[RMDB]
RNA sequence: GGGAACGACUCGAGUAGAGUCGAAAAGUCCGGGACGAAAGUCAGGACAAGAAGGUGUCCACGCCGACGAGUGCUAAGACACAGGAUUUAUCAGCCUUCGAGGCAGGCGCAUCCGCAAGAAAAGACAGCAUUCACUUAGCUUCGGCUAAGUGAAUGCAAAAGAAACAACAACAACAAC
Reactivity to DMS in 0.01 (KOAc 150mM, MgCl2 10mM, bicine 150mM(pH8.5), 24C), signal-to-noise 1, nucleotides 027 to 126: g060u010c000c000g210g000g010a000c030g100a230a040a100g000u000c000a270g030g030a000c000a110a140g000a030a300g000g050u000g000u190c100c120a110c100g110c030c000g030a210c300g000a000g000u040g010c000u000a080a190g000a250c180a030c140a000g000g000a100u000u000u000a110u040c180a210g000c000c000u000u000c070g210a300g000g030c180a030g000g010c190g000c140a000u000c000c120g000c040a000a070g000a010a050a120a040g100a000c120a030
Reactivity to 2A3 in 0.01 (KOAc 150mM, MgCl2 10mM, bicine 150mM(pH8.5), 24C), signal-to-noise 1, nucleotides 027 to 126: g000u000c000c030g040g300g010a000c000g040a020a000a000g000u000c000a000g010g000a050c030a040a000g050a030a000g070g000u000g000u000c000c030a080c010g020c000c000g070a220c120g030a010g010u130g070c000u190a090a100g050a010c010a010c000a120g010g110a080u080u130u180a070u080c010a000g000c000c010u000u150c010g030a040g000g050c000a000g040g000c000g000c000a090u030c060c000g010c070a060a070g080a050a110a000a000g000a010c060a040